[RMDB]
Structure probing data (2A3) for a 177-nucleotide construct. The 2A3 profile rests on 571 reads.

RNA sequence: GGGAACGACUCGAGUAGAGUCGAAAACGCACCCAAGCUGGUCAUUGGCGCGAACGGCUUCCUGGGUUCGCACGUGACUCGCCAGCUCGUCGCCGACUGCGCGCCGCAGAAAGGUGAGGUACGCGCGCCCCUGAUCCGCCUUCGGGCGGAUCAGGGGAAAAGAAACAACAACAACAAC
Reactivity to 2A3 in 0.01 (KOAc 150mM, MgCl2 10mM, bicine 150mM(pH8.5), 24C), signal-to-noise 2, nucleotides 027 to 126: c080g070c000a130c000c000c000a040a000g000c010u060g000g030u280c190a190u060u250g050g000c030g000c000g070a100a020c010g010g080c070u130u040c030c010u030g000g000g210u080u090c030g120c020a000c020g040u030g060a000c010u000c060g120c030c000a040g000c030u000c000g080u070c000g000c030c000g120a080c190u210g010c060g030c000g000c070c040g040c060a020g030a110a110a010g010g050u000g000a000g110g000u090a000c060g030c000g000c000g000
It was measured as part of the RMDB library OK1LIB.